[RMDB]
Chemical mapping of a 177-nucleotide RNA with 2A3 and DMS. It was measured as part of the RMDB library OK2TRN. The DMS profile rests on 950 reads. The RNA was probed in 150 mM KOAc, 10 mM MgCl2 and 150 mM bicine (pH 8.5) at 24 C. For 2A3 the reverse transcriptase was SuperScript II with manganese. For 2A3, 1,174 sequencing reads were counted.
RNA sequence: GGGAACGACUCGAGUAGAGUCGAAAACACCGGCGAGCCGGUUCUCCGGCUGACCGGACUGUCAGCGGCAACACUCCCGCACAUGGAUUAUGAGGUGGCAGGCACACCGGCACAGCGCAAGGUGUGGGAAGCGUGUAGCAUUCGUGCUACACGCUUCAAAAGAAACAACAACAACAAC
Reactivity to 2A3 in 0.01 (KOAc 150mM, MgCl2 10mM, bicine 150mM(pH8.5), 24C), signal-to-noise 1, nucleotides 027 to 126: c030a000c020c000g060g030c060g080a070g030c000c010g060g000u210u000c080u020c010c000g010g000c000u040g050a120c000c000g000g000a000c040u020g050u040c000a000g050c000g090g000c010a100a000c040a080c130u000c010c000c030g200c030a130c010a040u190g110g000a080u110u120a040u240g090a060g030g060u000g040g020c030a000g050g000c000a020c000a040c030c000g020g040c040a050c060a130g150c060g000c080a060a180g000g030u000g000u040g020g090
Reactivity to DMS in 0.01 (KOAc 150mM, MgCl2 10mM, bicine 150mM(pH8.5), 24C), signal-to-noise 2, nucleotides 027 to 126: c090a100c030c000g000g040c060g000a090g020c000c000g000g000u000u030c300u000c010c020g000g020c020u000g000a060c020c020g000g000a060c120u010g010u000c050a130g020c040g010g000c050a060a090c070a080c110u000c030c020c050g020c080a070c180a180u000g000g000a060u020u020a150u020g000a180g010g000u010g030g020c030a050g000g000c070a060c040a040c000c030g020g000c020a110c130a100g020c130g020c060a050a110g010g000u000g000u020g000g000